[RMDB]
RNA sequence: GGGAACGACUCGAGUAGAGUCGAAAACUAGCCUAGGCACCUUAGCGAGUCAACGUCUCUGUUAAAAUUAAUAAAUGAAGUCAAGAAAGGUGAGGCAUGGGCGGCCUCAGUGACCUGGACUAACUCACAAUGGCUUAUGAUUCGUCAUAAGCCAUUGAAAAGAAACAACAACAACAAC
Reactivity to DMS in 0.01 (KOAc 150mM, MgCl2 10mM, bicine 150mM(pH8.5), 24C), signal-to-noise 6, nucleotides 027 to 126: c080u000a070g020c010c010u000a060g010g010c040a060c030c070u000u010a070g020c050g000a060g010u000c040a060a110c090g020u000c010u000c040u000g010u000u000a040a070a090a090u010u010a070a100u010a040a090a110u010g000a080a050g010u000c050a030a080g010a080a080a070g010g010u000g010a030g010g010c020a040u000g020g010g020c070g000g000c010c010u000c020a060g000u010g010a140c060c010u000g010g000a070c050u000a070a130c080u010c080a150
Reactivity to 2A3 in 0.01 (KOAc 150mM, MgCl2 10mM, bicine 150mM(pH8.5), 24C), signal-to-noise 2, nucleotides 027 to 126: c010u000a030g000c020c000u040a050g060g000c030a040c040c030u040u030a020g020c010g050a020g060u010c030a060a050c030g030u020c020u010c020u080g090u100u040a110a130a130a090u150u220a050a100u110a130a020a150u140g080a110a030g030u050c030a000a020g070a180a100a010g090g040u050g010a020g000g000c030a020u070g040g050g000c000g010g010c010c010u000c010a020g080u050g100a050c000c000u000g000g020a010c010u030a110a000c020u040c040a020

Structure probing data (DMS and 2A3) for a 177-nucleotide construct. The 2A3 profile rests on 2,205 reads. The reactions ran in a buffer of 150 mM KOAc, 10 mM MgCl2 and 150 mM bicine (pH 8.5), at 24 C. High DMS reactivity at an A or C suggests that its Watson-Crick edge is free. It was measured as part of the RMDB library OK2TRN.